[RMDB]
RNA sequence: GGGAACGACUCGAGUAGAGUCGAAAACACGAUUUCUUCGGAAAUCGUGAAAAGAGCUAGCAACGUUCCGCUAGCAAAGAUCGAAAGAUCAAAGGAACCAAAAAAGUUCGAACUUCGGUUCGAACAACUCUACUAAAACCUUCGGGUUUUAGUAGAGAAAAGAAACAACAACAACAAC
Reactivity to DMS in 0.01 (KOAc 150mM, MgCl2 10mM, bicine 150mM(pH8.5), 24C), signal-to-noise 2, nucleotides 027 to 126: c000a010c000g000a000u000u000u000c000u000u010c240g020g000a000a000a000u000c000g000u000g010a040a060a060a200g010a220g000c000u000a020g010c000a110a180c170g000u010u000c020c020g000c000u000a000g010c020a020a080a130g010a010u000c000g030a080a150a130g000a020u000c010a020a060a150g000g000a040a060c050c150a000a040a110a050a120a100g010u000u000c000g000a000a000c000u000u020c190g010g010u010u000c000g010a010a000c010a010a060
Reactivity to 2A3 in 0.01 (KOAc 150mM, MgCl2 10mM, bicine 150mM(pH8.5), 24C), signal-to-noise 2, nucleotides 027 to 126: c000a000c000g000a000u010u000u020c030u050u050c200g030g000a000a000a000u000c010g000u000g030a010a060a010a000g070a030g010c010u010a000g000c040a070a210c060g050u060u000c000c010g010c010u000a000g000c020a060a130a000g020a010u020c010g050a050a050a020g000a000u000c010a020a000a000g030g010a000a010c030c080a060a010a040a040a010a140g000u010u000c000g000a000a000c000u040u100c280g060g000u010u000c000g000a000a000c000a010a000
The record gives the reactivity of an RNA of 177 nucleotides to DMS and 2A3.
For 2A3 the reverse transcriptase was SuperScript II with manganese.
Conditions: 150 mM KOAc, 10 mM MgCl2 and 150 mM bicine (pH 8.5), 24 C.
The DMS profile rests on 1,182 reads.
Reactivities are given for positions 27 through 126.
For 2A3, 2,760 sequencing reads were counted.
It was measured as part of the RMDB library M2PK50.